Structure probing data (2A3 and DMS) for a 177-nucleotide construct. 2A3 adducts were read by reverse transcription with SuperScript II with manganese. The RNA was probed in 150 mM KOAc, 10 mM MgCl2 and 150 mM bicine (pH 8.5) at 24 C. The 2A3 profile rests on 16,182 reads. As a SHAPE reagent, 2A3 marks flexible, mostly unpaired nucleotides at the ribose 2'-OH. It was measured as part of the RMDB library TTRDES.

[RMDB]
RNA sequence: GGGAACGACUCGAGUAGAGUCGAAAAGAUAUGGAAGUUUCUUCAGGGAGAAGGACAUCGGAAACGAUGUUCUUCGAAGAACUGAAGAGAACUUCCUAAGUCAAAGCUGGUGCUUCGGCACCAGCAACAUUAUAAGCUAGUUCGCUAGCUUAUAAUGAAAAGAAACAACAACAACAAC
Reactivity to 2A3 in 0.01 (KOAc 150mM, MgCl2 10mM, bicine 150mM(pH8.5), 24C), signal-to-noise 2, nucleotides 027 to 126: g020a030u070a040u180g000g000a010a000g000u000u030u020c000u010u000c010a010g000g020g030a050g010a010a010g000g010a000c000a010u000c010g030g050a100a040a050c010g000a000u000g010u000u000c000u000u010c010g000a000a000g010a010a010c010u000g010a000a010g010a050g020a020a000c000u010u000c000c000u020a170a020g050u030c070a190a050a050g000c010u000g000g010u010g010c030u070u120c300g150g030c000a000c000c000a000g000c010a000a000
Reactivity to DMS in 0.01 (KOAc 150mM, MgCl2 10mM, bicine 150mM(pH8.5), 24C), signal-to-noise 4, nucleotides 027 to 126: g010a050u010a300u010g000g000a010a010g000u000u000u000c000u000u000c010a010g000g020g000a090g010a020a010g010g000a010c000a010u010c000g000g010a150a110a240c000g010a010u000g010u000u000c000u000u000c000g000a070a140g000a150a180c010u000g000a010a000g000a050g020a030a010c000u000u000c000c000u000a020a080g000u010c050a110a120a150g010c000u000g000g020u000g010c010u000u010c240g020g030c000a010c000c010a010g010c000a020a070